The data come from the RNA Mapping Database (RMDB), libraries RFM100 and RFMREP. An RNA of 177 nucleotides, treated with DMS and 2A3 and read out base by base. For 2A3 the reverse transcriptase was SuperScript II with manganese. Conditions: 150 mM KOAc, 10 mM MgCl2 and 150 mM bicine (pH 8.5), 24 C.
RNA sequence: GGGAACGACUCGAGUAGAGUCGAAAAGAAAGAAAGAAAGAUGAUAUGAUGAUCAAAUUUGAUUCCCUAUUGGUUUGAUUGGCCGCCAUGAUGGCCUCAAAUUGUAUUAGCUCUAUCUGAUCAUCAAAGGGUUAUCGUAUUUCGAUACGAUAACCCUAAAAGAAACAACAACAACAAC
Reactivity to DMS in 0.01 (KOAc 150mM, MgCl2 10mM, bicine 150mM(pH8.5), 24C), signal-to-noise 3, nucleotides 027 to 126: g000a070a120a110g010a110a070a040g000a070a030a070g000a110u000g010a120u020a060u020g000a010u000g000a010u000c000a000a050a050u010u030u000g000a060u000u000c100c180c000u020a050u000u020g020g010u010u010u000g000a050u010u010g010g010c000c040g010c170c290a110u030g010a080u000g010g000c000c000u000c000a000a000a000u010u000g000u010a070u000u010a040g000c250u010c030u000a050u000c080u000g000a010u000c000a000u000c000a030a090
Reactivity to 2A3 in 0.01 (KOAc 150mM, MgCl2 10mM, bicine 150mM(pH8.5), 24C), signal-to-noise 3, nucleotides 027 to 126: g090a000a100a030g100a010a120a020g130a060a080a000g120a040u180g040a040u230a050u190g000a000u020g010a010u020c010a000a010a050u090u120u110g070a070u050u070c000c000c000u000a100u000u110g010g010u000u020u010g030a090u030u140g000g000c000c000g030c000c040a090u110g020a200u280g170g010c000c000u000c000a000a000a000u010u030g030u010a130u170u110a060g030c040u000c030u080a070u060c070u020g010a000u000c000a000u000c030a010a080